[RMDB]
RNA sequence: GGGAACGACUCGAGUAGAGUCGAAAAACCUCCACCUUCGGGUGGAGGUCGUGCGUAGCUGCGUUAAAUUAAUAGCUACGCUUAAUAAAUUUAAUUAACGCAUAAAACUGUGUUUCGACACAGUUAACGGGCAAUAUUAGUUCGCUAAUAUUGCCCGAAAAGAAACAACAACAACAAC
Reactivity to 2A3 in 0.01 (KOAc 150mM, MgCl2 10mM, bicine 150mM(pH8.5), 24C), signal-to-noise 1, nucleotides 027 to 126: a000c000c000u040c000c010a000c000c020u020u020c270g140g030g000u020g020g000a020g010g000u000c000g030u050g000c000g000u000a020g000c060u020g020c000g010u000u000a040a090a150u120u120a080a240u090a190g000c000u000a000c000g000c010u000u040a020a000u120a020a020a090u160u200u050a020a050u000u030a030a030c010g010c020a000u130a060a300a040a040c000u000g000u000g000u040u070u120c170g020a000c020a000c000a000g020u010u000a050a000